[RMDB]
RNA sequence: GGGAACGACUCGAGUAGAGUCGAAAACAGGAAACUGGUUAAUCGUUUUCCUUGUUAGUAUAGCGGAAACCAUAAAUAAGAAGAACUCUAAGUGCUUGAGUAGAGUUAAAAUAAUUAGACAGGCAAUUAAGGUACUCCACGUUCGCGUGGAGUACAAGUCUCUUUACGCGUUCGCGCGUAAAGAGACAAAAGAAACAACAACAACAAC
Reactivity to 2A3 in 0.01 (KOAc 150mM, MgCl2 10mM, bicine 150mM(pH8.5), 24C), signal-to-noise 1, nucleotides 027 to 156: c020a020g020g080a050a030a000c160u210g060g030u170u220a090a110u190c020g010u020u020u010u050c000c000u020u020g010u010u000a100g020u040a110u090a060g070c060g000g030a010a030a010c000c000a050u160a100a120a000u120a060a060g090a020a000g030a020a000c000u010c000u000a060a000g030u030g290c000u000u000g000a000g000u000a020g000a000g000u060u090a000a050a000a000u070a010a010u170u010a000g020a010c000a000g000g000c040a030a040u220u230a170a060g020g000u000a000c000u000c000c000a010c000g020u100u000c170g020c000g110u010g000g060a000g000u000a000c000a000a000
Chemical mapping of a 207-nucleotide RNA with 2A3. The RNA was probed in 150 mM KOAc, 10 mM MgCl2 and 150 mM bicine (pH 8.5) at 24 C.